[RMDB]
RNA sequence: GGGAACGACUCGAGUAGAGUCGAAAAACGCCGUCGUACGCGACGGCGAACACGCGGGCAGGAACGUGGCAGGCCGCAGAGGGUUGCCAUUCAUUCCUCGUGCGGUUCAACAACAUGGUCCAAGAAAUAAAUCAUUAGAGUUCGCUCUAAUGAUUUAAAAAGAAACAACAACAACAAC
Reactivity to 2A3 in 0.01 (KOAc 150mM, MgCl2 10mM, bicine 150mM(pH8.5), 24C), signal-to-noise 8, nucleotides 027 to 126: a000c020g010c010c010g010u010c010g010u020a030c240g010c010g110a000c010g000g000c000g000a000a000c010a030c010g030c010g020g050g010c070a030g020g020a060a010c020g010u020g020g020c050a030g050g060c010c010g000c040a040g050a080g120g060g050u040u060g050c070c010a030u090u050c010a030u050u060c000c000u010c010g130u050g000c020g000g020u070u120c040a090a080c020a040a020c030a080u110g060g000u010c010c000a030a010g050a050a100a010
Reactivity to DMS in 0.01 (KOAc 150mM, MgCl2 10mM, bicine 150mM(pH8.5), 24C), signal-to-noise 8, nucleotides 027 to 126: a110c080g000c000c010g010u000c000g040u010a080c250g020c010g010a020c000g010g010c000g000a020a020c060a120c040g030c060g000g010g010c170a050g010g000a030a020c130g030u000g000g000c060a080g010g000c000c000g010c210a120g000a120g000g000g000u010u000g000c140c100a040u010u020c060a120u000u010c000c000u000c020g000u020g010c000g010g010u010u010c060a120a090c140a090a080c080a060u010g000g000u000c020c030a110a110g000a070a080a120
Structure probing data (2A3 and DMS) for a 177-nucleotide construct. The reactions ran in a buffer of 150 mM KOAc, 10 mM MgCl2 and 150 mM bicine (pH 8.5), at 24 C. Reactivities are given for positions 27 through 126. 2A3 adducts were read by reverse transcription with SuperScript II with manganese.